[RMDB]
Source: RMDB library OK1LIB, as collected in RNAgym.
This 177-nucleotide RNA was probed chemically with 2A3.
Values cover nucleotides 27 to 126.
The reactions ran in a buffer of 150 mM KOAc, 10 mM MgCl2 and 150 mM bicine (pH 8.5), at 24 C.
For 2A3 the reverse transcriptase was SuperScript II with manganese.
For 2A3, 1,182 sequencing reads were counted.

RNA sequence: GGGAACGACUCGAGUAGAGUCGAAAAGCUGGGGGUCUGCCUUGGGCACCAAGCCAUCGGCGUUGCGUUCGGCGCCACCGUGGACCGUGCGCCCGAGCUAUUGCACGGCAAGACCAGCAGCGUAUUCGGCCGCAUAGACAUUCGUGUCUAUGCGGCCAAAAGAAACAACAACAACAAC
Reactivity to 2A3 in 0.01 (KOAc 150mM, MgCl2 10mM, bicine 150mM(pH8.5), 24C), signal-to-noise 3, nucleotides 027 to 126: g000c000u010g000g230g000g070g000u000c020u030g000c020c000u050u080g090g040g000c050a030c000c140a100a040g030c030c010a090u130c110g080g010c030g010u040u040g010c030g010u020u210c100g060g040c060g010c080c000a060c070c010g000u070g020g000a050c040c040g000u060g000c110g070c010c020c020g030a010g010c040u210a180u110u300g000c060a020c070g010g000c030a090a050g000a000c000c000a050g030c000a000g000c000g030u050a170u000u100c100